The data come from the RNA Mapping Database (RMDB), library TTRDEL. An RNA of 177 nucleotides, treated with DMS and 2A3 and read out base by base. For 2A3 the reverse transcriptase was SuperScript II with manganese. Values cover nucleotides 27 to 126.
[RMDB]
RNA sequence: GGGAACGACUCGAGUAGAGUCGAAAAGAUAUGGACGGUUUGUAUGAACUACGAAAUACAGUCGGAAACGACUGUGAUUUCGCAUAUAAUUUGUCCUAAGUCAAAGUACAGAGUUCGCUCUGUACAACUAAGGUGAUUACUUCGGUAAUCACCUUAGAAAAGAAACAACAACAACAAC
Reactivity to DMS in 0.01 (KOAc 150mM, MgCl2 10mM, bicine 150mM(pH8.5), 24C), signal-to-noise 4, nucleotides 027 to 126: g000a030u000a300u010g010g010a010c000g000g020u000u000u000g030u000a020u000g000a110a100c190u010a300c020g000a010a000a010u000a030c010a010g020u000c000g000g000a130a050a220c000g000a010c000u000g020u000g000a000u000u000u000c000g000c010a000u010a020u010a000a020u000u000u000g010u000c000c000u000a040a170g010u000c020a070a090a170g010u000a000c010a010g000a020g010u010u020c260g010c010u000c000u000g010u000a000c010a050a150
Reactivity to 2A3 in 0.01 (KOAc 150mM, MgCl2 10mM, bicine 150mM(pH8.5), 24C), signal-to-noise 3, nucleotides 027 to 126: g020a020u080a040u130g020g000a000c030g050g060u030u080u040g030u030a020u020g030a140a150c120u150a100c300g000a000a000a000u040a000c010a000g010u000c000g000g020a020a070a050c010g000a000c020u000g010u030g030a020u010u000u000c010g010c030a010u020a000u010a020a060u020u100u300g010u000c000c010u000a090a010g050u020c070a220a060a010g000u000a000c000a010g000a000g020u060u150c240g050c090u000c010u010g000u000a010c010a000a010